RNA sequence: GGGAACGACUCGAGUAGAGUCGAAAAGAUAUGGACCCAUAGAGGACAUGAAGACUAUCGGAAACGAUAGGCCUUCAACAGCCUCGGGUCCUAAGUCAAAAGUCCUACCUCUUCGGAGGUAGGACAAGUUUGCUACGAUGUUCGCAUCGUAGCAAACAAAAGAAACAACAACAACAAC
Reactivity to 2A3 in 0.01 (KOAc 150mM, MgCl2 10mM, bicine 150mM(pH8.5), 24C), signal-to-noise 1, nucleotides 027 to 126: g010a000u030a010u130g010g010a000c000c030c020a040u300a120g010a010g000g000a080c200a290u300g000a000a010g000a010c000u010a000u000c000g010g100a000a040a000c000g020a010u000a000g030g000c000c000u040u020c020a130a060c160a050g060c000c000u000c000g010g000g000u020c010c000u010a030a000g040u010c010a000a050a180a080g000u010c000c010u010a010c000c000u000c000u100u110c250g260g020a000g010g000u000a020g020g010a000c000a010a000
Reactivity to DMS in 0.01 (KOAc 150mM, MgCl2 10mM, bicine 150mM(pH8.5), 24C), signal-to-noise 2, nucleotides 027 to 126: g020a020u010a300u000g000g000a000c000c010c010a290u000a300g030a000g030g000a010c060a120u000g030a010a010g000a140c030u010a010u000c000g040g000a070a080a080c020g020a020u000a010g010g000c220c020u000u000c000a070a160c190a200g000c000c000u010c000g020g010g020u000c000c000u000a000a060g000u000c030a050a120a130a170g000u000c000c010u000a000c000c000u000c000u010u020c220g040g050a010g010g000u000a000g000g000a000c000a010a050